This 207-nucleotide RNA was probed chemically with 2A3. The 2A3 profile rests on 888 reads.
[RMDB]
RNA sequence: GGGAACGACUCGAGUAGAGUCGAAAACGGCUAAACACAUAGUCUAGCCAGGCUGUAUUGCUUGGAUACAGUUUGGUUAAAUUUAAUCAAGCUCGCAUUCAUGCCCUGCUCUUCGGGUGAUGGAUGCUAAAAAUAAUAGAAUGAGCUAUGCAUGUAGGUACAUUACACCCUUCGGGGUGUAAUGUACAAAAGAAACAACAACAACAAC
Reactivity to 2A3 in 0.01 (KOAc 150mM, MgCl2 10mM, bicine 150mM(pH8.5), 24C), signal-to-noise 2, nucleotides 027 to 156: c020g000g000c010u040a110a090a050c100a020c000a130u090a020g020u010c010u030a000g020c010c000a000g000g000c000u010g000u010a000u000u090g020c020u000u020g010g030a000u000a010c000a000g000u010u000u000g010g000u010u030a030a110a170u130u150u080a050a120u050c000a000a000g000c000u000c030g010c000a000u000u010c000a000u000g000c000c010c000u010g000c000u000c020u010u020c000g010g040g070u240g300a000u000g000g000a000u000g000c000u000a000a000a000a000a000u150a020a000u000a000g000a000a060u090g000a010g000c020u010a080u180g200c160a050u170g050u190a050g090
For 2A3 the reverse transcriptase was SuperScript II with manganese.